[RMDB]
RNA sequence: GGGAACGACUCGAGUAGAGUCGAAAAACUACUCCGGUGACGCUGUGUCCACAUAGCGGCCGAAGGCGAAGGAGCAAAGCUCGGCGCCUCCAAGAAGGAACGCAACCGCUUCUGGACUCGCAUUUCCGUCGGCAGCAUAUUUCGAUAUGCUGCCGACAAAAGAAACAACAACAACAAC
Reactivity to 2A3 in 0.01 (KOAc 150mM, MgCl2 10mM, bicine 150mM(pH8.5), 24C), signal-to-noise 2, nucleotides 027 to 126: a000c050u080a010c000u000c040c010g020g010u050g050a040c050g000c100u250g010u010g000u130c010c010a090c040a040u040a020g000c000g000g080c010c010g040a070a050g060g000c000g020a190a060g130g030a000g000c110a280a060a020g020c010u010c040g000g000c020g000c000c010u030c010c000a130a160g130a040a110g120g020a110a030c080g010c070a030a050c020c000g000c000u120u030c000u010g020g000a010c010u050c030g030c000a000u050u050u030c030c020